RNA sequence: GGGAACGACUCGAGUAGAGUCGAAAAGGAAGAGGAAUACAAACGAUAUAUUACCUCAAUGCAAAAGGCGGCCGGCAUCAAUGAAGCUGACGAAGAACAACGAUUUAGCCGCGAGAAAAUGGAUGAAUUACGAGCCUUUACCGACAAGUACAUGCGGAGUGCGUCCAUGAUUCGUCAUGGACGCACUAAAAGAAACAACAACAACAAC
Reactivity to 2A3 in 0.01 (KOAc 150mM, MgCl2 10mM, bicine 150mM(pH8.5), 24C), signal-to-noise 1, nucleotides 027 to 156: g000g020a130a000g020a000g000g080a000a060u120a000c020a030a260a000c080g010a010u040a000u000a010u180u280a300c000c000u000c040a000a050u060g060c050a030a100a000a000g060g000c000g040g040c000c050g000g000c000a000u070c080a010a180u180g000a080a000g000c020u040g000a000c050g090a140a160g060a090a060c000a110a000c020g000a000u000u000u160a050g000c000c000g000c010g010a000g000a070a020a000a000u050g080g010a000u040g010a080a110u100u160a040c050g000a000g110c000c000u050u000u000a110c000c000g010a010c010a040a040g070u080a050c010a040u120g060c050g050g000
The record gives the reactivity of an RNA of 207 nucleotides to 2A3. 2A3 adducts were read by reverse transcription with SuperScript II with manganese. The RNA was probed in 150 mM KOAc, 10 mM MgCl2 and 150 mM bicine (pH 8.5) at 24 C. For 2A3, 391 sequencing reads were counted. It was measured as part of the RMDB library OK3TST. Reactivities are given for positions 27 through 156.